Source: RMDB library OK3TST, as collected in RNAgym. Structure probing data (DMS and 2A3) for a 207-nucleotide construct. For 2A3, 2,447 sequencing reads were counted. Values cover nucleotides 27 to 156. For DMS, 4,199 sequencing reads were counted. For DMS the reverse transcriptase was MarathonRT.

RNA sequence: GGGAACGACUCGAGUAGAGUCGAAAACAGAUCAGUACGCUGAUCUGACUCAACGAGAGUUGAGAAACUCUAGAUUCGUUGCGCAGAGAAUCUAGAGAAAACAGUAGAAUCGAUGAAGCCCGGCAUCGAUUCUACUGAAAACCGGGCAAGCGUGACAUAAAUGAGGACUAUUCGUAGUCCUCAUUUAAAAAGAAACAACAACAACAAC
Reactivity to DMS in 0.01 (KOAc 150mM, MgCl2 10mM, bicine 150mM(pH8.5), 24C), signal-to-noise 2, nucleotides 027 to 156: c020a050g020a000u020c010a030g020u000a130c300g030c030u020g000a040u000c010u020g020a160c030u010c010a020a010c010g010a300g000a300g030u000u020g000a060g010a200a050a160c000u010c000u010a010g000a030u000u000c000g000u000u000g030c090g020c090a270g010a210g000a030a010u000c010u000a020g000a040g000a050a050a050a120c010a030g020u000a030g000a020a060u000c010g020a030u000g010a080a140g010c040c010c000g030g000c010a030u000c000g010a020u000u000c010u000a000c000u010g020a050a020a060a150c050c030g040g040g040c070a120a110g020c010g040u000g020a080c120a290
Reactivity to 2A3 in 0.01 (KOAc 150mM, MgCl2 10mM, bicine 150mM(pH8.5), 24C), signal-to-noise 2, nucleotides 027 to 156: c010a010g000a010u000c000a000g050u060a070c240g020c080u000g000a000u010c000u010g020a070c000u000c000a000a010c000g030a000g000a010g100u010u050g000a000g050a050a040a000c000u000c010u000a020g000a000u000u010c020g040u090u130g060c050g000c080a000g050a010g000a130a010u000c000u000a010g000a000g010a080a040a000a010c020a000g010u000a000g010a000a000u000c000g010a010u000g030a100a050g060c020c020c050g060g000c000a000u010c000g000a000u000u000c000u000a000c000u000g000a000a000a010a010c030c020g000g030g050c040a080a010g010c010g040u010g070a040c020a150